[RMDB]
RNA sequence: GGGAACGACUCGAGUAGAGUCGAAAAAGGCUCGAAAGUCAAAACUGUGAAUCCAGUCGGGUGACAGAUCACGGUUCAAGUGUAUCCGCCGGCUCUCCACCUCAGCCUCCAACACGUGGGUUUCGGUGUUGUACGCGUUCAUCAACGUCUGGCCCAGCACAGUACCCAACUUCGGUUGGGUACUGUGAAAAGAAACAACAACAACAAC
Reactivity to 2A3 in 0.01 (KOAc 150mM, MgCl2 10mM, bicine 150mM(pH8.5), 24C), signal-to-noise 1, nucleotides 027 to 156: a000g010g010c010u030c010g060a060a000a020g030u110c030a030a030a030a030c020u030g000u020g160a170a170u050c040c140a090g010u150c160g150g000g150u230g000a030c000a050g010a040u030c000a000c000g030g040u090u120c030a020a160g010u000g040u090a000u040c030c030g000c000c000g030g000c000u040c000u010c010c040a010c020c040u170c100a030g010c000c010u070c010c030a050a020c040a000c060g050u170g000g020g000u040u080u130c050g000g000u000g030u050u130g060u060a030c090g010c000g020u050u090c120a200u050c110a170a040c050g000u000c000u080g040g020c020c000c000a000g020
An RNA of 207 nucleotides, treated with 2A3 and read out base by base.
For 2A3 the reverse transcriptase was SuperScript II with manganese.
Reactivities are given for positions 27 through 156.